Structure probing data (2A3) for a 207-nucleotide construct. Reactivities are given for positions 27 through 156. Reactivities are rounded to 0.1 and cut off at 0 and 3. The RNA was probed in 150 mM KOAc, 10 mM MgCl2 and 150 mM bicine (pH 8.5) at 24 C.

[RMDB]
RNA sequence: GGGAACGACUCGAGUAGAGUCGAAAAAGCUGGAAAACUAUAUCAACAACAUCAAAACGGACCUCUCCAACAACCACAAAAACAAGGGUGUGUGCACGGUCAGUAUCCACGUGUUGACUACACCGGGUUUCAACCACGCAUUCUCAGGACUACUCAGUCGAUCAAUCAGCUUCGGCUGAUUGAUCGAAAAAGAAACAACAACAACAAC
Reactivity to 2A3 in 0.01 (KOAc 150mM, MgCl2 10mM, bicine 150mM(pH8.5), 24C), signal-to-noise 1, nucleotides 027 to 156: a010g040c040u050g010g140a050a060a070a110c070u110a200u120a010u300c020a050a150c030a030a010c020a030u160c010a000a170a010a050c030g050g050a010c010c010u030c000u040c040c000a040a000c000a040a100c020c020a120c020a000a170a150a070a000c080a080a050g040g000g000u020g000u000g000u060g010c040a010c030g010g030u050c040a050g030u020a090u150c070c010a070c140g030u050g010u010u100g120a080c010u020a000c200a030c020c010g000g000g000u080u040u020c040a090a130c010c000a000c090g010c010a030u080u000c010u020c030a010g000g050a030c010u000a050c010u050c100a000g140